Structure probing data (2A3 and DMS) for a 177-nucleotide construct.
[RMDB]
RNA sequence: GGGAACGACUCGAGUAGAGUCGAAAACGGGCGUAGUACUGGAGACAGUAUGAGCGCGCUGUUCGCUGCGCCUAGGUGUUAUCCCUAGGGUGUUAGGCAGUGGAACUGUGACAGCCGUAAGGGAUGACCGGGUAUCUAGCUUCGGCUGGAUACCCGGAAAAGAAACAACAACAACAAC
Reactivity to 2A3 in 0.01 (KOAc 150mM, MgCl2 10mM, bicine 150mM(pH8.5), 24C), signal-to-noise 5, nucleotides 027 to 126: c020g000g030g000c020g000u010a000g010u000a020c070u080g020g020a070g010a040c000a000g000u010a010u090g100a130g050c080g000c040g000c020u020g020u010u020c010g000c010u000g000c020g130c000c000u010a040g040g010u080g060u170u200a100u120c020c000c000u010a010g030g000g020u060g090u090u080a120g060g000c000a000g000u100g120g090a070a090c000u020g020u050g060a020c020a030g040c000c010g070u090a050a090g040g020g010a030u040g040a030
Reactivity to DMS in 0.01 (KOAc 150mM, MgCl2 10mM, bicine 150mM(pH8.5), 24C), signal-to-noise 5, nucleotides 027 to 126: c020g010g010g010c000g020u010a260g000u000a020c020u000g000g000a260g000a190c000a010g020u000a010u010g010a120g020c030g010c040g030c060u000g000u020u000c020g000c000u000g000c040g020c010c000u020a030g010g000u010g010u010u030a070u020c120c000c000u010a080g000g000g020u010g000u030u020a140g010g020c010a010g000u000g000g040a050a300c000u000g020u030g010a130c110a070g000c000c020g000u010a070a060g000g000g020a050u010g000a160

The DMS profile rests on 11,270 reads.
The reactions ran in a buffer of 150 mM KOAc, 10 mM MgCl2 and 150 mM bicine (pH 8.5), at 24 C.
Reactivities are given for positions 27 through 126.
For 2A3 the reverse transcriptase was SuperScript II with manganese.